[RMDB]
RNA sequence: GGGAACGACUCGAGUAGAGUCGAAAAGCAGUUAAAGGGAUUUUUGGAUUGGGGUGGGGAAAACAGGGUUGAUCUUCUUUUUGGAUUAUAAUUCUGUGAUUUGUGAAGAGAGUCUGGAAAGAAAUACACCAGGAUGUUAACUAUGUGCAGGCAGUGAACGAUAAUUUAGUUUCGACUAAAUUAUCGUAAAAGAAACAACAACAACAAC
Reactivity to 2A3 in 0.01 (KOAc 150mM, MgCl2 10mM, bicine 150mM(pH8.5), 24C), signal-to-noise 1, nucleotides 027 to 156: g010c020a020g020u130u100a020a070a030g030g010g060a120u150u090u160u240u230g090g010a080u040u170g000g030g060g050u160g020g030g010g010a000a050a000a020c030a020g060g000g010u040u040g000a020u000c000u070u020c000u000u140u080u000u030g020g000a000u030u030a030u060a240a050u120u060c020u000g080u030g070a110u030u140u140g070u080g030a020a020g010a020g000a000g030u000c020u010g000g050a110a000a000g000a010a100a000u090a030c040a000c040c000a000g000g010a080u050g010u140u030a060a020c020u080a070u140g000u020g030c010a000g000g000c010a000g040u000g020a030
Chemical mapping of a 207-nucleotide RNA with 2A3. Conditions: 150 mM KOAc, 10 mM MgCl2 and 150 mM bicine (pH 8.5), 24 C. It was measured as part of the RMDB library OK3TST. Values cover nucleotides 27 to 156.